Source: RMDB library OK3TST, as collected in RNAgym. Chemical mapping of a 207-nucleotide RNA with 2A3. The reactions ran in a buffer of 150 mM KOAc, 10 mM MgCl2 and 150 mM bicine (pH 8.5), at 24 C.
[RMDB]
RNA sequence: GGGAACGACUCGAGUAGAGUCGAAAAUCAAGAAGAUAAAGCAACCAAGACUAAGAAAAACAGGCAAACAGAAACUAGAAGGAGUAGCUAGGAUUUAAUCUUAGAUUAAACGUGAGAUUCUCCAAAUGUAUUGGUACAUGAAUUUCUUUAGUCUUAAACCCUCCUCAGUAUUCGUACUGAGGAGGGUAAAAGAAACAACAACAACAAC
Reactivity to 2A3 in 0.01 (KOAc 150mM, MgCl2 10mM, bicine 150mM(pH8.5), 24C), signal-to-noise 1, nucleotides 027 to 156: u030c030a000a050g120a060a020g020a110u100a030a140a090g080c020a010a040c060c030a000a000g030a020c000u010a000a010g000a000a020a010a000a000c020a040g060g010c000a020a080a000c000a080g160a210a010a030c050u090a010g030a130a030g040g010a010g020u030a000g010c020u020a030g030g030a110u080u030u140a030a010u020c020u000u050a010g000a010u010u040a030a080a020c070g040u070g090a050g030a080u100u010c030u000c000c000a020a090a000u070g000u030a180u120u000g030g000u020a010c000a050u120g100a130a080u050u030u010c000u070u110u030a000g020u000c000u010u080a080a000